[RMDB]
Description: This 177-nucleotide RNA was probed chemically with DMS and 2A3. It was measured as part of the RMDB libraries RFM100 and RFMREP. DMS adducts were read by reverse transcription with MarathonRT.
RNA sequence: GGGAACGACUCGAGUAGAGUCGAAAAAGACACAACUCCAUGUGUGUCUCAAUUGAAGAACGGGGCUAGAAGAGCAACAGGUUGUGCUUUCCUCACUGUAACACCCAUUGCAGUGGUGACAAUGAGAUCCCUAAAUGAAGUUCGCUUCAUUUAGGGAAAAAGAAACAACAACAACAAC
Reactivity to DMS in 0.01 (KOAc 150mM, MgCl2 10mM, bicine 150mM(pH8.5), 24C), signal-to-noise 7, nucleotides 027 to 126: a060g000a060c010a000c010a010a030c050u020c160c300a120u010g010u000g020u010g010u010c000u000c070a100a080u020u020g000a110a070g010a070a090c100g000g000g000g010c110u000a080g000a100a080g000a060g010c030a030a050c100a070g000g020u000u000g010u010g010c050u000u010u000c050c000u010c020a020c010u000g000u000a020a040c060a130c020c020c030a230u010u000g000c030a020g020u010g000g020u010g010a080c210a050a070u010g000a110g020a150
Reactivity to 2A3 in 0.01 (KOAc 150mM, MgCl2 10mM, bicine 150mM(pH8.5), 24C), signal-to-noise 5, nucleotides 027 to 126: a000g030a010c010a000c010a050a060c030u080c100c070a100u130g020u010g010u000g050u030c010u000c000a180a230u120u180g100a100a040g040a110a020c050g010g000g020g000c020u040a020g030a100a010g010a080g040c020a020a030c010a050g060g020u060u040g030u080g020c030u030u050u040c000c010u030c010a000c010u000g000u010a030a000c010a060c030c000c000a010u020u060g000c030a010g000u040g040g050u080g010a040c080a100a100u180g010a040g020a080